[RMDB]
The record gives the reactivity of an RNA of 207 nucleotides to DMS and 2A3. Reactivities are rounded to 0.1 and cut off at 0 and 3. For 2A3 the reverse transcriptase was SuperScript II with manganese. DMS adducts were read by reverse transcription with MarathonRT. For 2A3, 4,248 sequencing reads were counted. The RNA was probed in 150 mM KOAc, 10 mM MgCl2 and 150 mM bicine (pH 8.5) at 24 C.

RNA sequence: GGGAACGACUCGAGUAGAGUCGAAAACCAAUAAUAACUGGCAAAGAAAAACAAAACCUAGCUUUCGCUGCCUAAUAAGCAGUAGCAUAGCUGAUCCUCCGUGCAUCGCCCAUGUGCUACGGUAAGGGUCUCACUCUAAGUGGGCUACACUAGUUAACCUAUAACGUAACUUCGGUUACGUUAUAGGAAAAGAAACAACAACAACAAC
Reactivity to DMS in 0.01 (KOAc 150mM, MgCl2 10mM, bicine 150mM(pH8.5), 24C), signal-to-noise 1, nucleotides 027 to 156: c010c010a050a090u010a120a130u010a100a070c070u000g000g030c010a130a080a140g020a060a110a130a100a300c020a110a030a110a080c070c040u000a030g030c030u010u000u000c060g000c000u000g020c000c010u000a170a050u000a060a050g000c010a030g010u000a080g040c100a080u000a050g020c000u000g000a080u000c010c000u000c060c020g020u010g000c000a030u010c060g000c030c070c010a170u000g040u000g000c000u010a070c000g010g000u000a030a040g000g010g010u010c040u010c020a040c030u000c100u000a050a140g110u020g000g000g020c020u000a080c060a120c020u000a070g020u000u020a050a300
Reactivity to 2A3 in 0.01 (KOAc 150mM, MgCl2 10mM, bicine 150mM(pH8.5), 24C), signal-to-noise 5, nucleotides 027 to 156: c010c010a010a010u180a060a010u070a020a050c060u090g080g000c070a070a130a120g120a140a150a110a080a040c110a060a140a080a020c040c080u070a030g010c000u010u030u000c020g000c000u010g000c000c000u090a110a050u280a160a010g000c010a000g030u090a050g020c080a040u020a020g000c010u010g010a010u030c000c000u000c000c000g000u020g000c010a000u010c030g000c000c000c000a010u020g010u000g000c050u080a000c000g020g010u070a100a070g040g000g020u000c020u030c030a120c020u140c040u100a060a040g030u010g000g010g000c010u070a020c090a030c070u090a030g070u080u070a040a020